RNA sequence: GGGAACGACUCGAGUAGAGUCGAAAAGCGCAAAUCCACAAAAGCCAACGAUGAGCGUUUCGCUGUAGCCGCUUAAGGCAACAGCCGGGGCCGCCUGAGCCCUGUUACCAAAGACGGCUGGCGGGGGUAAUUACUUAUUGCUUCGGCAAUAAGUAAAUCAUCGCACGUUAUUCGUAACGUGCGAUGAAAAAGAAACAACAACAACAAC
Reactivity to 2A3 in 0.01 (KOAc 150mM, MgCl2 10mM, bicine 150mM(pH8.5), 24C), signal-to-noise 1, nucleotides 027 to 156: g000c010g000c000a000a000a090u040c040c040a050c120a120a170a020a000g070c040c040a050a030c030g050a060u040g000a030g000c000g000u030u130u100c030g010c000u010g000u050a100g000c000c000g040c200u300u300a120a120g000g000c000a020a000c000a000g000c010c010g000g000g000g000c010c070g060c050c000u030g010a000g000c000c000c040u020g020u040u060a020c000c000a050a000a000g010a000c000g030g000c030u040g040g040c030g000g010g000g000g000u050a090a130u040u000a010c000u000u010a000u000u010g030c000u050u060c180g140g000c000a000a000u000a000a000g000u000a000a000a000

Chemical mapping of a 207-nucleotide RNA with 2A3. Reactivities are given for positions 27 through 156. The data come from the RNA Mapping Database (RMDB), library M2RFPK. For 2A3, 643 sequencing reads were counted. Conditions: 150 mM KOAc, 10 mM MgCl2 and 150 mM bicine (pH 8.5), 24 C.